[RMDB]
RNA sequence: GGGAACGACUCGAGUAGAGUCGAAAAGGGAUGAUGGCGACCUUCAUACCGGUUCCGACCCCGGUCUUGGCCAGGGUUGCCGAGACCGCUGUCGCGGCAGUGAUCGAUGCGCCGGUAAGGGUGGCGGCUACAGCUGAACGUUCGCGUUCAGCUGUAGAAAAGAAACAACAACAACAAC
Reactivity to DMS in 0.01 (KOAc 150mM, MgCl2 10mM, bicine 150mM(pH8.5), 24C), signal-to-noise 2, nucleotides 027 to 126: g000g010g020a080u010g010a060u010g020g010c020g010a050c000c040u020u000c120a120u010a030c010c040g020g000u010u010c170c040g000a070c020c030c090c030g010g000u000c010u000u000g000g020c030c060a210g030g010g010u020u020g020c000c010g000a020g000a020c000c000g000c100u000g010u010c010g010c180g000g000c000a090g000u000g010a120u020c070g000a070u040g020c070g020c010c010g010g020u000a050a080g000g010g000u020g000g040c000g010g000
Reactivity to 2A3 in 0.01 (KOAc 150mM, MgCl2 10mM, bicine 150mM(pH8.5), 24C), signal-to-noise 4, nucleotides 027 to 126: g100g010g020a060u110g020a030u100g130g020c030g030a050c000c000u050u030c050a040u040a070c010c010g010g000u100u070c030c020g030a040c010c000c010c000g020g000u000c000u020u040g010g010c030c070a230g170g150g000u190u190g000c000c000g000a000g000a010c020c010g010c020u010g000u030c010g010c060g050g000c030a050g060u070g150a160u090c070g050a080u110g030c020g000c030c020g010g000u020a030a020g000g020g000u050g030g000c030g020g030
Conditions: 150 mM KOAc, 10 mM MgCl2 and 150 mM bicine (pH 8.5), 24 C. This 177-nucleotide RNA was probed chemically with DMS and 2A3.